RNA sequence: GGGAACGACUCGAGUAGAGUCGAAAACAAAGACUGAGUGAUGAACCAGAAGUAUGGACUGGUUGCGUUGGUGGAGACGGUCGGGUCCAGUUCGCUGUCGAGUAGAGUGUGGGCUCCAUCGACGCCGCUUUAAGGUCCCCAAUCGUGGCGUGUCGGCCUAUCACACAAUGUUCGCAUUGUGUGAUAGAAAAGAAACAACAACAACAAC
Reactivity to DMS in 0.01 (KOAc 150mM, MgCl2 10mM, bicine 150mM(pH8.5), 24C), signal-to-noise 3, nucleotides 027 to 156: c070a110a080a110g030a150c030u000g000a100g010u000g010a110u010g000a110a080c020c030a050g020a080a110g020u010a140u010g010g010a160c030u010g000g030u010u000g020c000g010u000u000g000g030u000g000g010a080g020a040c020g030g000u000c040g010g020g010u000c010c020a080g020u000u010c180g020c030u000g000u000c060g010a090g020u010a150g000a120g010u010g030u000g020g020g000c000u000c010c000a030u000c000g020a020c000g060c000c040g020c030u010u000u000a070a090g030g010u000c010c000c010c040a070a120u000c060g020u000g020g010c030g030u000g020u010c020g020g020c110
Reactivity to 2A3 in 0.01 (KOAc 150mM, MgCl2 10mM, bicine 150mM(pH8.5), 24C), signal-to-noise 5, nucleotides 027 to 156: c050a010a110a010g100a050c040u090g020a040g090u080g070a140u100g030a040a030c020c010a030g030a110a030g100u150a130u210g060g030a020c030u040g020g000u020u020g010c000g010u010u020g010g000u000g000g010a010g000a010c020g040g020u290c000g000g000g000u000c010c000a000g010u030u040c150g010c070u030g040u120c080g010a010g030u030a020g020a040g000u160g010u040g020g030g000c000u010c000c000a010u000c010g000a000c000g000c010c000g000c000u060u110u120a130a030g060g010u030c000c000c000c020a010a060u080c090g060u050g000g040c070g000u090g050u060c010g030g020c000